Record summary:
This 207-nucleotide RNA was probed chemically with DMS and 2A3. Source: RMDB library OK3TST, as collected in RNAgym. For DMS, 3,496 sequencing reads were counted. The 2A3 profile rests on 2,047 reads. The reactions ran in a buffer of 150 mM KOAc, 10 mM MgCl2 and 150 mM bicine (pH 8.5), at 24 C. Values are in units of 0.01, from 0 to 300, in steps of 10. Reactivities are given for positions 27 through 156.
[RMDB]
RNA sequence: GGGAACGACUCGAGUAGAGUCGAAAAGACUAGGUUCUGGCCAAAGGGGUGUUUGCCUCUCAUGGGACAUGUCGUUAAAGAGAGGGGCUGUGCUCUUUUUGAAUGUUCCUCCUUCAUUUUUCCUGAAAUAGGAAUGCAGUGUCUAAAGCUCUAGCAGAUAAGUUGUUUUGUUCGCAAAACAACUUAUAAAAGAAACAACAACAACAAC
Reactivity to DMS in 0.01 (KOAc 150mM, MgCl2 10mM, bicine 150mM(pH8.5), 24C), signal-to-noise 2, nucleotides 027 to 156: g020a090c040u010a080g010g020u010u010c000u000g000g010c080c040a060a100a090g000g010g020g010u000g020u000u010u000g000c020c010u000c050u000c030a110u000g000g010g020a060c030a110u000g000u010c080g020u010u000a100a180a130g000a120g000a070g010g020g020g010c030u010g010u000g030c020u000c010u010u010u000u000u000g000a090a100u000g000u000u000c020c000u010c060c060u000u030c020a130u000u000u000u000u000c040c010u000g010a040a090a170u010a060g000g000a040a050u000g000c050a070g020u010g020u000c030u000a040a070a110g010c010u010c030u010a090g030c080a110g010
Reactivity to 2A3 in 0.01 (KOAc 150mM, MgCl2 10mM, bicine 150mM(pH8.5), 24C), signal-to-noise 3, nucleotides 027 to 156: g030a050c050u070a040g090g000u070u060c030u070g040g040c050c030a050a040a010g050g010g000g010u070g040u080u180u240g040c010c010u000c000u020c050a110u110g050g040g050a040c040a060u210g070u160c050g030u060u110a110a080a020g100a010g000a020g010g010g010g000c030u060g040u030g020c010u000c000u070u080u010u040u110g080a070a030u070g030u010u020c010c000u020c020c010u070u040c040a100u060u090u050u090u080c010c010u000g080a090a140a000u150a070g020g010a020a000u030g000c010a010g020u010g020u110c040u100a000a090a060g020c020u050c010u100a030g010c020a020g030